[RMDB]
RNA sequence: GGGAACGACUCGAGUAGAGUCGAAAACAAUCAACAAUAUGGUUUGUGUAGUUAUGCUGAAAAUCGUUGAGGUAGUAUGGAAUAGGUUAACCGUAAGACCUUAAGUUGAAAAACUUUAAAAUUAAUCAAAAUCAUGUACACUUCGGUGUACAUGAAACUAAGUACAGAAGUUCGCUUCUGUACUUAGAAAAGAAACAACAACAACAAC
Reactivity to 2A3 in 0.01 (KOAc 150mM, MgCl2 10mM, bicine 150mM(pH8.5), 24C), signal-to-noise 4, nucleotides 027 to 156: c050a010a070u140c040a020a070c020a040a130u080a100u210g040g020u030u070u060g050u050g030u020a060g030u070u070a040u110g030c040u050g040a050a020a030a080u100c070g010u030u060g010a010g040g020u050a030g010u010a040u060g030g050a130a140u010a080g060g020u050u030a060a030c020c030g000u020a040a020g020a020c000c000u010u020a030a010g000u000u010g030a060a050a030a010a020c040u120u170u190a070a100a050a080u170u180a110a030u130c040a020a080a020a130u020c000a000u000g000u000a000c010a000c010u040u100c220g040g000u010g000u000a010c010a010u000g000a000a000a010
Reactivity to DMS in 0.01 (KOAc 150mM, MgCl2 10mM, bicine 150mM(pH8.5), 24C), signal-to-noise 2, nucleotides 027 to 156: c040a070a130u010c040a090a080c040a090a160u000a180u000g020g040u000u010u010g020u000g020u000a070g030u000u000a070u000g030c020u010g010a090a040a090a070u000c030g010u000u000g000a120g000g010u000a060g040u010a130u010g000g000a060a120u010a040g010g000u000u000a090a210c040c090g000u000a160a130g000a040c010c000u000u010a020a070g000u000u000g000a190a150a130a030a050c020u000u010u010a010a040a040a110u010u020a060a150u020c020a040a090a100a120u000c020a000u000g000u010a000c010a010c000u000u020c300g040g020u000g000u000a000c000a000u000g000a020a000a060